RNA sequence: GGGAACGACUCGAGUAGAGUCGAAAAUGGCUUCGACGUGGGUCGCGAAGCAGUGCAGUGCAUACCGAGGACCAGUCACCUCGUAAAUCCAUCUGGGAAACUACAAACGCCAACGACGAGCGUUUCGCUCUCGCCGCUUAAUCCCGGCGGGCGCUGCCAAUUCGGUAGACUUCGGUCUACCGAAUUGAAAAGAAACAACAACAACAAC
Reactivity to 2A3 in 0.01 (KOAc 150mM, MgCl2 10mM, bicine 150mM(pH8.5), 24C), signal-to-noise 3, nucleotides 027 to 156: u100g050g000c010u030u030c030g130a130c050g100u190g100g080g010u180c040g020c040g050a010a000g030c030a000g060u020g020c060a030g050u040g050c010a030u050a160c050c030g000a000g020g000a020c010c000a010g040u090c070a040c010c010u040c020g180u160a010a020a040u000c010c020a030u010c040u020g030g020g010a080a070a070c130u220a090c120a060a070a000c020g000c020c000a100a070c090g170a030c080g000a080g070c000g020u050u050u090c060g000c000u020c010u010c000g000c000c010g000c010u030u080a030a040u040c020c000c020g010g000c000g000g000g000c020g000c000u010g030c010
Reactivity to DMS in 0.01 (KOAc 150mM, MgCl2 10mM, bicine 150mM(pH8.5), 24C), signal-to-noise 1, nucleotides 027 to 156: u020g070g010c030u000u000c010g010a040c070g130u000g000g000g130u000c050g010c030g020a080a160g010c000a120g010u000g020c090a070g060u000g030c030a120u010a140c220c020g000a110g010g020a260c070c020a200g000u010c080a130c020c010u000c010g000u000a010a090a050u000c010c020a110u000c020u030g000g010g010a110a080a080c020u000a070c060a030a070a050c020g030c020c020a050a030c000g010a010c030g020a080g020c030g000u010u000u030c080g000c000u000c000u000c010g020c020c000g010c030u000u000a090a220u010c040c040c000g040g030c000g030g040g020c030g020c020u020g010c000
This 207-nucleotide RNA was probed chemically with 2A3 and DMS. The data come from the RNA Mapping Database (RMDB), library RSTRND. Values are in units of 0.01, from 0 to 300, in steps of 10. For 2A3, 1,804 sequencing reads were counted. For 2A3 the reverse transcriptase was SuperScript II with manganese.